Chemical mapping of a 177-nucleotide RNA with DMS and 2A3. The RNA was probed in 150 mM KOAc, 10 mM MgCl2 and 150 mM bicine (pH 8.5) at 24 C. DMS (dimethyl sulfate) methylates the pairing face of unpaired adenines and cytosines.
[RMDB]
RNA sequence: GGGAACGACUCGAGUAGAGUCGAAAAAAGCGCUCUUUGAUCUCAAUGCUGUCUGGCUGGACAUUUGCCAAAGCCCAUGAACGCCCUACCAGACACUGUUGAGACAAAUAUGGGCUUUAAUUGAACGUUGCUGCGUCUAAUUCGUUAGACGCAGCAAAAAAGAAACAACAACAACAAC
Reactivity to DMS in 0.01 (KOAc 150mM, MgCl2 10mM, bicine 150mM(pH8.5), 24C), signal-to-noise 1, nucleotides 027 to 126: a010a000g010c000g000c000u000c120u000u010u000g020a050u000c010u000c000a000a000u000g010c300u000g000u000c000u000g010g030c030u000g010g020a020c060a070u000u000u000g000c150c230a170a070a160g000c080c150c070a110u030g000a000a030c220g000c000c000c020u000a270c000c000a000g000a010c000a000c000u010g040u000u000g000a010g000a000c050a030a000a000u040a130u000g000g000g010c000u020u000u000a120a110u130u000g000a040a190c300g000
Reactivity to 2A3 in 0.01 (KOAc 150mM, MgCl2 10mM, bicine 150mM(pH8.5), 24C), signal-to-noise 2, nucleotides 027 to 126: a000a000g110c160g060c010u030c030u060u010u090g290a300u020c000u000c000a000a000u050g010c010u010g000u000c000u000g000g000c090u030g000g000a000c020a180u100u050u030g080c030c100a120a130a000g010c000c010c000a080u200g120a020a020c070g040c000c000c010u000a000c000c000a000g000a000c000a000c000u060g020u010u010g000a000g000a000c000a000a000a000u300a010u010g000g000g000c000u000u100u040a070a040u050u110g100a150a060c160g000

DMS adducts were read by reverse transcription with MarathonRT.
For DMS, 1,076 sequencing reads were counted.